[RMDB]
The record gives the reactivity of an RNA of 177 nucleotides to 2A3. The data come from the RNA Mapping Database (RMDB), library M2PK90. For 2A3, 752 sequencing reads were counted. Values cover nucleotides 27 to 126.

RNA sequence: GGGAACGACUCGAGUAGAGUCGAAAAAUGAUUCGUAGUGUAAGACGAUCGACAGUCAUCGCUUGCCAGCAGGACCACCAAAGCAAUACGCUUCGGUAACUACUCGAGAUCCCAAGCGAUAAAACAAGGACUAUGGUACGUUCGCGUACCAUAGUCCAAAAGAAACAACAACAACAAC
Reactivity to 2A3 in 0.01 (KOAc 150mM, MgCl2 10mM, bicine 150mM(pH8.5), 24C), signal-to-noise 1, nucleotides 027 to 126: a000u070g000a010u030u090c060g010u060a190g060u070g060u230a030a090g060a110c040g000a030u050c060g140a130c030a050g000u060c000a030u030c070g000c060u040u040g090c050c000a030g040c000a000g070g060a020c050c000a030c000c000a100a000a000g000c010a050a110u110a300c100g000c000u000u000c000g000g000u000a060a120c000u020a000c000u020c030g000a000g000a000u000c020c000c000a000a000g050c110g070a080u170a120a100a000a070c110a020a130